[RMDB]
RNA sequence: GGGAACGACUCGAGUAGAGUCGAAAAUUUGAAUUGCAGUAGUCGAUCCAGUUGGCUAGGGUUGAAGGUUCAGUGACAUGUGUAAUCUGGACAUUUACAUAAAGUAGAAUUAAAGACCUCCUAACAAUCCUCAGCAAAUAUUCGUAUUUGCUGAGGAAAAAGAAACAACAACAACAAC
Reactivity to DMS in 0.01 (KOAc 150mM, MgCl2 10mM, bicine 150mM(pH8.5), 24C), signal-to-noise 2, nucleotides 027 to 126: u000u010u000g000a160a110u000u020g010c070a050g000u000a090g030u000c050g010a050u000c010c050a090g000u010u000g010g040c050u000a070g000g000g000u010u000g020a110a110g010g020u000u010c030a070g000u000g000a180c080a080u010g020u000g000u000a050a080u020c030u000g010g000a110c130a100u000u010u000a010c010a080u000a050a050a140g010u000a100g000a060a090u000u010a080a120a210g010a030c060c030u000c050c030u000a070a070c150a090a190
This 177-nucleotide RNA was probed chemically with DMS. The RNA was probed in 150 mM KOAc, 10 mM MgCl2 and 150 mM bicine (pH 8.5) at 24 C. DMS adducts were read by reverse transcription with MarathonRT.